Conditions: 150 mM KOAc, 10 mM MgCl2 and 150 mM bicine (pH 8.5), 24 C. An RNA of 177 nucleotides, treated with 2A3 and DMS and read out base by base. DMS adducts were read by reverse transcription with MarathonRT. 2A3 adducts were read by reverse transcription with SuperScript II with manganese.
RNA sequence: GGGAACGACUCGAGUAGAGUCGAAAAGAUAUGGAGUUACUCCCCACCGAACUACACGCUAGUAUCGGAAACGAUACAUGCGUGCGAGGUAACUCCUAAGUCAAACUAUAUGGUUCGCCAUAUAGAACAUUGCAUGUAGCUUCGGCUACAUGCAAUGAAAAGAAACAACAACAACAAC
Reactivity to 2A3 in 0.01 (KOAc 150mM, MgCl2 10mM, bicine 150mM(pH8.5), 24C), signal-to-noise 2, nucleotides 027 to 126: g090a020u140a060u160g010g030a010g030u010u010a020c040u220c070c080c050c030a100c020c100g040a120a090c100u200a050c210a030c000g000c020u050a060g000u000a010u000c000g040g000a030a060a010c000g030a000u010a000c000a020u060g010c000g000u030g020c000g050a030g000g000u000a000a000c000u050c020c010u020a120a000g090u070c100a090a080a120c010u000a000u000a000u050g120g000u020u100c300g010c090c030a000u030a020u010a010g000a010a050
Reactivity to DMS in 0.01 (KOAc 150mM, MgCl2 10mM, bicine 150mM(pH8.5), 24C), signal-to-noise 3, nucleotides 027 to 126: g010a040u010a090u010g000g010a020g010u010u000a030c000u000c030c020c050c180a300c210c070g020a070a060c130u010a300c020a020c000g020c000u010a300g010u000a000u000c000g010g000a030a020a100c010g010a000u010a000c000a100u000g000c000g030u000g000c040g000a050g000g010u000a020a030c000u010c000c000u010a010a070g020u000c050a130a080a230c000u000a010u000a000u000g000g000u000u020c220g060c000c000a020u000a010u000a010g000a130a200